Chemical mapping of a 207-nucleotide RNA with 2A3. It was measured as part of the RMDB library M2RFPK.

RNA sequence: GGGAACGACUCGAGUAGAGUCGAAAAAUGUGCGGCAAAGAAACAUUGUUUAUACAAAGGCACUUCGCAAUGUGUGCUCAAACAUUGCUUAUUCAAACACGCUUCACAAUGUGCGACAAAGAAACAUAAAACGUUUAGUACUUCGGUACUAAACGAAGUGAGAUGCGUACUUCGGUACGCAUCUCACAAAAGAAACAACAACAACAAC
Reactivity to 2A3 in 0.01 (KOAc 150mM, MgCl2 10mM, bicine 150mM(pH8.5), 24C), signal-to-noise 1, nucleotides 027 to 156: a000u140g000u040g020c040g010g000c090a030a060a070g040a010a020a000c000a030u000u000g020u040u150u090a210u080a040c030a010a080a010g150g000c000a000c000u100u170c030g000c000a000a030u010g030u000g000u010g020c010u090c150a040a060a000c000a050u000u000g000c000u130u050a270u080u120c050a020a010a050c030a020c120g030c040u030u030c060a040c000a070a120u030g000u000g050c030g010a100c100a020a100a030g170a010a040a000c030a020u170a140a070a000a000c010g000u000u000u000a000g000u030a000c000u000u030c080g070g000u000a000c000u000a000a010a000c000g040a040a000
2A3 adducts were read by reverse transcription with SuperScript II with manganese.